Source: RMDB library OK2TRN, as collected in RNAgym.
Chemical mapping of a 177-nucleotide RNA with DMS and 2A3.
2A3 is a SHAPE reagent: it acylates the 2'-hydroxyl of flexible nucleotides of all four kinds.

[RMDB]
RNA sequence: GGGAACGACUCGAGUAGAGUCGAAAAACGGUGCUCUUCGAUGACUAGCCUGCUGUUUCGGCAGGAAUGCCGCGGGGAUCAGCGUCGAGACCACUAGCGCGGUCGCUAUCACGAAUACCACCGCGUACGCCGAAACGUAAUUCGUUACGUUUCGGCGAAAAGAAACAACAACAACAAC
Reactivity to DMS in 0.01 (KOAc 150mM, MgCl2 10mM, bicine 150mM(pH8.5), 24C), signal-to-noise 1, nucleotides 027 to 126: a050c070g000g030u000g030c210u000c000u030u010c010g010a030u050g040a050c100u000a130g000c000c000u020g010c030u000g010u000u020u000c150g020g000c000a000g010g010a050a090u000g030c010c000g070c010g000g000g000g010a070u000c050a050g000c050g000u000c050g030a040g000a170c060c020a080c070u000a190g000c000g010c010g000g010u000c120g070c120u020a070u000c080a160c200g000a050a040u000a090c120c040a100c000c000g000c000g020u020a090
Reactivity to 2A3 in 0.01 (KOAc 150mM, MgCl2 10mM, bicine 150mM(pH8.5), 24C), signal-to-noise 2, nucleotides 027 to 126: a000c100g040g020u030g000c010u020c040u130u060c020g170a200u040g120a180c030u030a040g100c010c000u010g080c020u070g050u300u230u240c050g030g000c020a000g050g060a040a040u050g020c000c000g000c040g000g000g000g040a070u100c040a010g110c000g070u050c030g010a050g000a010c010c030a030c060u070a040g010c000g000c010g000g000u030c060g000c060u000a040u070c030a030c180g070a080a010u020a020c000c020a000c020c000g000c020g040u010a070
Reactivities are given for positions 27 through 126. The RNA was probed in 150 mM KOAc, 10 mM MgCl2 and 150 mM bicine (pH 8.5) at 24 C. DMS (dimethyl sulfate) methylates the pairing face of unpaired adenines and cytosines. For DMS, 948 sequencing reads were counted. DMS adducts were read by reverse transcription with MarathonRT.